[RMDB]
RNA sequence: GGGAACGACUCGAGUAGAGUCGAAAAAGCAAGAACACAGCAGAGGCAGAAAAGUUCUCCACUACACCUACAGCUACUGUCAGCCACUGGCGGGAGGAGAGGACAGAGUUUUGGGUUAGGGUACCUCCAAGCUGCCCAGCGAGGGAAGGGGAAAGGACCUAUCGGAAAGUUUCGACUUUCCGAUAGGAAAAGAAACAACAACAACAAC
Reactivity to DMS in 0.01 (KOAc 150mM, MgCl2 10mM, bicine 150mM(pH8.5), 24C), signal-to-noise 2, nucleotides 027 to 156: a100g040c030a050a060g000a120a120c070a110c040a070g030c040a090g000a040g000g010c030a110g000a030a060a100a080g040u010u000c000u030c020c060a170c060u000a080c050a130c020c030u000a070c150a060g030c020u000a100c040u000g000u000c050a130g000c000c020a030c070u000g020g000c080g020g020g010a130g050g030a050g000a130g020g040a080c100a060g000a090g020u000u000u000u000g020g000g010u000u000a060g040g000g000u010a090c070c010u010c060c040a070a130g000c030u010g000c040c010c000a090g000c020g050a150g010g000g000a060a060g010g000g000g000a030a070a060g000g000a150
Reactivity to 2A3 in 0.01 (KOAc 150mM, MgCl2 10mM, bicine 150mM(pH8.5), 24C), signal-to-noise 3, nucleotides 027 to 156: a000g070c030a030a020g040a080a000c030a000c010a030g050c030a020g020a050g060g000c020a010g090a060a100a010a010g010u060u020c060u030c060c020a120c000u090a060c040a040c030c000u040a040c030a030g040c010u070a050c020u140g040u060c030a010g080c040c020a100c110u110g070g000c050g040g020g010a050g000g050a080g000a010g010g020a000c010a010g040a030g030u040u070u110u070g030g010g000u030u090a060g030g000g020u030a060c010c020u010c020c030a030a010g000c020u030g000c000c000c010a020g030c030g040a030g000g010g030a010a030g030g010g000g020a050a040a000g030g010a040
Source information
This 207-nucleotide RNA was probed chemically with DMS and 2A3. For 2A3 the reverse transcriptase was SuperScript II with manganese. For 2A3, 2,431 sequencing reads were counted. The RNA was probed in 150 mM KOAc, 10 mM MgCl2 and 150 mM bicine (pH 8.5) at 24 C.